This 177-nucleotide RNA was probed chemically with 2A3.
For 2A3 the reverse transcriptase was SuperScript II with manganese.
Conditions: 150 mM KOAc, 10 mM MgCl2 and 150 mM bicine (pH 8.5), 24 C.
For 2A3, 478 sequencing reads were counted.
RNA sequence: GGGAACGACUCGAGUAGAGUCGAAAAAUGUAUCUGGGUGGCUGCUCCACUAAAGCCCGGGAAUAUGCAACCAGUUACAUUUGAGGCCAUUUGGGCUUAAGCGUAUUCCAUGGAAAGUUAUCGUCCCCGCGAUGACCAUGUUCGCAUGGUCAUCGCGAAAAGAAACAACAACAACAAC
Reactivity to 2A3 in 0.01 (KOAc 150mM, MgCl2 10mM, bicine 150mM(pH8.5), 24C), signal-to-noise 1, nucleotides 027 to 126: a000u000g000u070a000u070c000u010g000g040g040u060g000g000c000u010g000c000u120c060c000a060c220u150a100a100a100g000c050c000c100g000g000g000a110a020u050a000u030g050c000a010a010c000c000a090g000u020u000a020c000a000u000u000u040g050a030g030g020c070c000a020u070u110u300g110g000g000c000u190u000a000a060g020c040g000u040a090u000u030c000c000a010u080g030g050a060a250a000g040u000u010a160u300c040g030u090c000c000c000